[RMDB]
RNA sequence: GGGAACGACUCGAGUAGAGUCGAAAAGAAAGGGACCCCUGCCAGGGGAGCGUCGGUCAGCACCCGAAGCAUAUUUUUUUAUGCCGCUGACACCCCUCGACGCCGCAGGAGGGGUGGUCCCGAAAGACCUGGUAAUUAAUUUCGAUUAAUUACCAGGAAAAGAAACAACAACAACAAC
Reactivity to DMS in 0.01 (KOAc 150mM, MgCl2 10mM, bicine 150mM(pH8.5), 24C), signal-to-noise 3, nucleotides 027 to 126: g000a100a150a210g000g010g000a040c010c010c010c010u010g000c020c030a120g070g040g010g010a080g020c010g010u000c010g000g010u010c000a030g030c020a200c200c160c080g000a100a130g000c010a010u000a000u000u000u010u000u010u010u000a010u010g010c000c080g000c000u000g000a030c020a190c040c030c020c070u010c000g000a060c050g020c020c050g000c060a110g000g000a080g000g010g000g010u000g020g000u000c010c000c000g010a050a120a060g000a160
Reactivity to 2A3 in 0.01 (KOAc 150mM, MgCl2 10mM, bicine 150mM(pH8.5), 24C), signal-to-noise 2, nucleotides 027 to 126: g030a080a050a040g010g000g000a020c020c000c010c020u060g140c030c030a130g070g020g050g070a050g000c010g010u030c040g040g000u010c020a010g010c020a070c070c170c110g040a040a000g000c030a040u000a060u040u150u080u030u020u030u020a000u010g020c030c050g030c010u020g000a000c010a120c030c060c010c010u010c010g020a010c000g000c030c000g080c020a050g010g050a030g010g050g000g020u030g000g030u000c020c000c010g020a020a010a010g020a010